[RMDB]
RNA sequence: GGGAACGACUCGAGUAGAGUCGAAAAAGGUGGAGUUCGCUCCACCUCGGCGAUCCUAAGUCGGAGGACCCUCGAGGGUGUUUAGUUCGGAAACGAAGAACACCUCCCCACCGAGCUAACUCCGAUAUGGAAAUGUGGGGGAGUUUCGACUCCCCAACUGAAAUCGUAUAUUCGUAUACGAUUUCAGAAAAGAAACAACAACAACAAC
Reactivity to DMS in 0.01 (KOAc 150mM, MgCl2 10mM, bicine 150mM(pH8.5), 24C), signal-to-noise 2, nucleotides 027 to 156: a000g020g060u000g010g000a030g040u000u010c300g020c020u030c000c000a030c010c000u010c040g000g040c170g010a090u000c020c000u000a060a240g010u000c010g020g020a040g040g010a140c140c090c020u000c100g010a270g030g000g000u000g020u000u000u000a030g020u000u000c000g030g000a150a150a280c020g040a050a250g000a060a030c030a040c010c000u000c060c030c020c060a300c160c020g000a050g020c010u000a090a260c000u000c000c020g030a090u000a090u000g020g000a080a080a130u000g020u010g010g020g010g010g020a060g010u000u010u020c090g000a050c000u000c000c000c000c010a000a040
Reactivity to 2A3 in 0.01 (KOAc 150mM, MgCl2 10mM, bicine 150mM(pH8.5), 24C), signal-to-noise 3, nucleotides 027 to 156: a000g010g000u030g000g010a020g010u090u110c160g150c060u020c000c000a010c000c000u010c030g080g030c020g060a070u040c000c000u090a130a040g010u020c000g000g000a020g000g010a010c010c000c010u010c010g010a020g010g010g010u010g010u030u050u060a260g070u040u020c020g040g030a070a100a090c010g010a030a010g010a000a010c000a020c000c000u060c020c010c010c000a050c010c020g000a000g000c010u030a070a000c000u000c010c010g000a000u000a000u000g020g070a020a120a070u220g020u210g060g000g020g050g010a010g000u070u140u190c190g130a060c000u000c000c000c000c010a000a030